Structure probing data (DMS and 2A3) for a 207-nucleotide construct.

RNA sequence: GGGAACGACUCGAGUAGAGUCGAAAAUAUACGUCAUCUGUGGUCUGUAGUGUAUGAUCAUUUUGAUGUUGUGAAUGGCAAAGAACGCUGUUAUGUGCAUAUGCAUUCAUCUAAUCAAAGUCCUAUGCUGAGUACUGUAAAAACAAAUUUGUACAUGUCAGAUCAGGGAAUUCGUUCCCUGAUCUGAAAAAGAAACAACAACAACAAC
Reactivity to DMS in 0.01 (KOAc 150mM, MgCl2 10mM, bicine 150mM(pH8.5), 24C), signal-to-noise 1, nucleotides 027 to 156: u010a130u010a100c070g020u000c020a070u000c000u010g040u000g040g000u000c000u010g020u000a100g030u000g010u010a090u010g000a120u030c040a110u000u000u030u000g000a040u000g050u000u000g010u010g000a100a070u010g010g050c020a050a060a160g000a070a060c090g050c030u000g000u000u010a090u010g020u000g020c080a090u010a180u010g030c040a060u000u000c020a050u020c130u010a110a090u010c050a050a030a100g000u010c010c020u010a090u000g020c040u000g010a110g000u000a040c100u030g020u000a040a020a040a110a150c050a100a050a170u000u000u020g000u000a100c070a140u010g030
Reactivity to 2A3 in 0.01 (KOAc 150mM, MgCl2 10mM, bicine 150mM(pH8.5), 24C), signal-to-noise 3, nucleotides 027 to 156: u160a010u040a010c040g040u030c010a060u000c060u070g050u050g000g000u000c030u020g120u100a090g010u080g030u150a110u060g070a020u020c040a030u000u030u110u040g050a030u030g030u110u130g020u040g060a090a010u020g060g020c080a040a080a140g070a070a040c060g000c100u070g080u190u090a090u110g030u050g010c030a040u040a040u300g020c010a010u050u020c010a000u020c040u160a130a030u070c030a030a010a000g020u000c000c020u020a020u070g000c010u030g020a030g040u010a040c020u010g060u080a040a080a090a000a020c030a060a100a050u040u090u040g010u000a010c020a050u070g040
Values cover nucleotides 27 to 156. The reactions ran in a buffer of 150 mM KOAc, 10 mM MgCl2 and 150 mM bicine (pH 8.5), at 24 C. It was measured as part of the RMDB library OK3TST.